Source: RMDB library TTRDES, as collected in RNAgym. This 177-nucleotide RNA was probed chemically with DMS and 2A3. For 2A3 the reverse transcriptase was SuperScript II with manganese. Values cover nucleotides 27 to 126. The reactions ran in a buffer of 150 mM KOAc, 10 mM MgCl2 and 150 mM bicine (pH 8.5), at 24 C.
[RMDB]
RNA sequence: GGGAACGACUCGAGUAGAGUCGAAAAGAUAUGGAGCUAUGGACAUGAUACGGUUCGGAAACGAACCCACUAUCAACAGCCAUGAGCUCCUAAGUCAAAACCACAACGUGCUUCGGCACGUUGUGGACAGUGAUGAUAUGUUCGCAUAUCAUCACUGAAAAGAAACAACAACAACAAC
Reactivity to DMS in 0.01 (KOAc 150mM, MgCl2 10mM, bicine 150mM(pH8.5), 24C), signal-to-noise 8, nucleotides 027 to 126: g010a030u000a170u010g000g000a010g020c000u000a020u000g000g000a050c070a280u010g010a010u000a030c260g000g000u000u000c000g010g000a020a030a080c000g010a010a010c000c010c060a060c300u010a010u000c000a080a120c290a180g010c000c000a010u000g000a030g010c000u000c000c000u000a010a040g000u010c020a130a070a160a180c010c000a010c010a000a000c000g000u000g000c000u000u020c270g030g000c010a000c000g010u000u000g010u000g000g010a030
Reactivity to 2A3 in 0.01 (KOAc 150mM, MgCl2 10mM, bicine 150mM(pH8.5), 24C), signal-to-noise 8, nucleotides 027 to 126: g000a000u030a010u080g010g000a000g000c010u020a010u010g000g010a090c090a300u300g010a040u020a020c110g010g000u000u000c000g010g010a030a030a010c000g000a000a010c000c010c000a070c040u040a010u010c030a180a270c070a150g000c000c000a020u160g150a010g010c000u000c000c000u000a020a000g000u010c010a030a020a090a190c010c000a000c000a000a010c000g000u010g000c000u120u140c300g170g000c010a000c020g000u000u000g000u000g000g000a040